[RMDB]
RNA sequence: GGGAACGACUCGAGUAGAGUCGAAAAGAGGUCUGCCGAAUUUCCCUUAUAUCCAUACCACGGCAGACUAUGAGGUAGAGAUCUAAGGGAAAGUGGUAUGGAUUGGUCUCUACCAGGAAGGAUUGGACUACUGGAAUGUAUUCGUACAUUCCAGUAGAAAAGAAACAACAACAACAAC
Reactivity to DMS in 0.01 (KOAc 150mM, MgCl2 10mM, bicine 150mM(pH8.5), 24C), signal-to-noise 7, nucleotides 027 to 126: g010a140g010g010u000c010u000g000c000c010g010a180a170u010u000u000c000c000c010u000u010a110u000a110u000c010c010a040u000a020c010c000a210c040g010g020c010a010g000a020c010u010a030u010g020a090g000g010u000a020g000a040g010a010u000c020u010a120a130g000g020g010a040a050a100g020u000g010g000u000a010u000g000g000a110u010u010g020g010u000c010u000c010u000a020c010c000a140g010g010a090a080g000g010a230u010u010g010g010a300
Reactivity to 2A3 in 0.01 (KOAc 150mM, MgCl2 10mM, bicine 150mM(pH8.5), 24C), signal-to-noise 4, nucleotides 027 to 126: g160a030g030g010u000c000u010g010c010c010g070a160a210u060u050u030c030c000c000u040u100a300u020a020u030c000c000a010u000a020c000c000a050c020g000g000c010a000g000a000c010u010a120u160g210a100g000g000u010a000g010a000g000a020u000c050u210a130a140g090g020g050a090a080a020g080u040g010g020u030a030u020g000g000a010u020u090g010g000u000c000u020c000u010a010c000c010a010g060g070a100a050g050g020a080u070u190g050g020a040